[RMDB]
RNA sequence: GGGAACGACUCGAGUAGAGUCGAAAAGCAUCACCAUCAUCAUAUUUGAUUAGCUUUCAGGCUGUUGACUGGAGGUGUAUGCACGCAAGCUUCCGGAACUCAUUUAGAAAAACCCUCGGAAGAUUUAAGGUUUAUAGAUCUUCGGAUCUAUAAACCUAAAAGAAACAACAACAACAAC
Reactivity to 2A3 in 0.01 (KOAc 150mM, MgCl2 10mM, bicine 150mM(pH8.5), 24C), signal-to-noise 6, nucleotides 027 to 126: g000c000a010u020c000a010c040c000a070u050c000a000u000c010a030u040a270u230u200u140g140a130u110u130a030g020c030u070u170u170c070a060g040g040c010u080g050u110u070g050a110c090u010g030g040a030g030g000u000g070u070a010u030g030c050a020c030g070c080a130a090g040c000u000u010c000c010g010g070a070a050c030u050c120a170u140u210u230a120g070a020a060a030a030a020c010c010c010u030c020g010g000a010a020g010a020u030u090u080a030
Reactivity to DMS in 0.01 (KOAc 150mM, MgCl2 10mM, bicine 150mM(pH8.5), 24C), signal-to-noise 4, nucleotides 027 to 126: g010c010a010u000c000a010c000c000a060u010c010a050u000c100a060u030a100u010u040u040g010a100u030u010a050g010c060u010u030u030c220a080g010g010c010u000g000u000u010g010a070c140u000g000g000a010g000g010u000g000u040a000u000g020c000a100c150g000c180a090a120g010c010u000u000c000c000g000g010a070a070c170u030c160a130u010u040u050a140g000a080a080a080a110a120c050c030c020u010c020g000g000a020a030g000a170u020u020u020a110

The data come from the RNA Mapping Database (RMDB), libraries RFM100 and RFMREP. An RNA of 177 nucleotides, treated with 2A3 and DMS and read out base by base. DMS adducts were read by reverse transcription with MarathonRT. Conditions: 150 mM KOAc, 10 mM MgCl2 and 150 mM bicine (pH 8.5), 24 C.